[RMDB]
RNA sequence: GGGAACGACUCGAGUAGAGUCGAAAAGAUAUGGACAAUCGGGAGUUGGCCAUCGGAAACGAUGGCAACGAAGAACGAUCGUCCUAAGUCAAAGAUCCAGGAUGGAGUUCGCUCCAUCCUGGAUCAAGGAUACUGUAAGGUUCGCCUUACAGUAUCCAAAAGAAACAACAACAACAAC
Reactivity to 2A3 in 0.01 (KOAc 150mM, MgCl2 10mM, bicine 150mM(pH8.5), 24C), signal-to-noise 3, nucleotides 027 to 126: g000a000u020a020u030g000g000a000c000a030a010u000c010g030g010g010a050g030u030u050g300g130c000c000a010u000c000g010g010a010a010a000c000g010a000u000g000g020c020a000a000c000g020a050a020g020a010a000c010g000a010u010c030g000u000c000c000u010a000a000g010u000c030a090a130a150g000a000u000c000c010a000g020g000a000u000g000g000a010g020u090u160c260g140c170u000c000c000a000u000c000c000u010g000g000a000u000c000a000a000
Reactivity to DMS in 0.01 (KOAc 150mM, MgCl2 10mM, bicine 150mM(pH8.5), 24C), signal-to-noise 3, nucleotides 027 to 126: g000a000u010a030u010g000g000a010c000a040a000u000c000g000g010g000a020g010u000u000g000g000c010c000a000u000c000g010g000a010a010a020c000g010a010u000g000g000c000a000a000c000g000a070a170g000a070a300c020g000a010u000c040g010u000c000c000u000a000a060g000u000c010a100a120a150g000a010u000c000c000a020g010g000a010u010g000g000a020g010u000u020c230g010c000u000c000c000a000u000c000c000u000g000g000a000u000c000a010a060
Conditions: 150 mM KOAc, 10 mM MgCl2 and 150 mM bicine (pH 8.5), 24 C.
An RNA of 177 nucleotides, treated with 2A3 and DMS and read out base by base.
Source: RMDB library TTRDEL, as collected in RNAgym.